Conditions: 150 mM KOAc, 10 mM MgCl2 and 150 mM bicine (pH 8.5), 24 C. Chemical mapping of a 177-nucleotide RNA with DMS and 2A3. It was measured as part of the RMDB library TTRDEL. The DMS profile rests on 10,202 reads.

RNA sequence: GGGAACGACUCGAGUAGAGUCGAAAAGAUAUGGAGCAGUAGGGAGCUGCUCGGAAACGAGGCAGCGAAGAACUACAUGCUCCUAAGUCAGUGCCACCAAUCAGCUGUUCGCAGCUGAUUGGUGGAAGUAAAUCGUUAUCUUCGGAUAACGAUUUACAAAAGAAACAACAACAACAAC
Reactivity to DMS in 0.01 (KOAc 150mM, MgCl2 10mM, bicine 150mM(pH8.5), 24C), signal-to-noise 5, nucleotides 027 to 126: g010a040u000a300u000g010g000a010g000c000a010g000u000a010g000g010g000a090g020c000u000g000c000u000c000g000g010a060a080a150c010g010a050g010g020c000a010g010c000g020a070a130g000a090a130c000u000a000c010a100u000g000c000u000c000c000u000a010a060g010u000c030a120g010u010g000c000c000a020c010c000a000a000u000c000a010g000c000u000g010u000u010c230g020c000a000g000c000u010g000a000u000u000g000g020u000g000g000a000a040
Reactivity to 2A3 in 0.01 (KOAc 150mM, MgCl2 10mM, bicine 150mM(pH8.5), 24C), signal-to-noise 4, nucleotides 027 to 126: g030a010u090a020u180g000g000a010g000c000a010g010u020a010g000g000g030a020g000c000u000g000c000u000c000g010g030a080a090a010c030g020a060g300g080c010a000g000c010g060a300a020g000a020a010c000u000a000c060a160u040g000c000u000c010c000u010a060a000g020u000c040a010g110u040g240c000c000a000c010c000a000a010u000c000a000g000c010u030g100u110u170c300g020c180a000g000c000u000g020a000u000u000g010g000u000g000g000a000a000